[RMDB]
Chemical mapping of a 177-nucleotide RNA with 2A3. The RNA was probed in 150 mM KOAc, 10 mM MgCl2 and 150 mM bicine (pH 8.5) at 24 C. It was measured as part of the RMDB library OK1LIB.
RNA sequence: GGGAACGACUCGAGUAGAGUCGAAAAUAUAAAUAAGAAUUCCGGUCUUUUCCGGAGCCACCCAGUGGAAUGCUACGUGCAUAAAUGCACGUAGCUAAAGACCCGAAGGCUAGCAAUAGCUAGCCAACCAUCACUACCGGUUCGCCGGUAGUGAUGGAAAAGAAACAACAACAACAAC
Reactivity to 2A3 in 0.01 (KOAc 150mM, MgCl2 10mM, bicine 150mM(pH8.5), 24C), signal-to-noise 1, nucleotides 027 to 126: u250a000u150a020a120a020u250a170a080g130a060a160u100u060c000c010g000g050u090c170u090u060u030u090c000c030g020g000a010g000c030c000a020c060c000c010a010g070u060g040g030a050a050u060g000c010u020a000c000g000u000g000c010a010u120a300a150a010u170g000c050a000c000g000u000a000g000c000u000a000a000a000g000a020c000c000c060g120a100a010g000g020c020u010a000g000c060a110a300u060a070g000c020u020a000g000c030c030a000a010